RNA sequence: GGGAACGACUCGAGUAGAGUCGAAAAGAUAUGGACACACUAUCGCUUCACGCAGAUACGCCUAAUUAUUUCGGAAACGAAAUAAUUAGGCGUGUAGUGAAGAACUACGAUCCCUGUGUCCUAAGUCCGAUACUGUCUGGUUCGCCAGACAGUAUCGAAAAGAAACAACAACAACAAC
Reactivity to DMS in 0.01 (KOAc 150mM, MgCl2 10mM, bicine 150mM(pH8.5), 24C), signal-to-noise 2, nucleotides 027 to 126: g020a070u010a290u000g020g000a020c000a040c010a010c210u000a140u000c010g010c000u000u000c000a020c040g020c300a210g000a080u040a030c000g000c020c000u030a000a000u000u000a010u000u010u000c000g000g010a170a120a240c010g020a010a000a000u000a000a020u000u000a000g000g020c000g000u000g030u010a030g010u000g000a010a010g000a040a030c200u040a300c000g000a000u000c010c020c020u000g000u000g000u000c010c000u000a020a130g010u000c040
The record gives the reactivity of an RNA of 177 nucleotides to DMS. The reactions ran in a buffer of 150 mM KOAc, 10 mM MgCl2 and 150 mM bicine (pH 8.5), at 24 C. The data come from the RNA Mapping Database (RMDB), library TTRINS. For DMS, 1,682 sequencing reads were counted.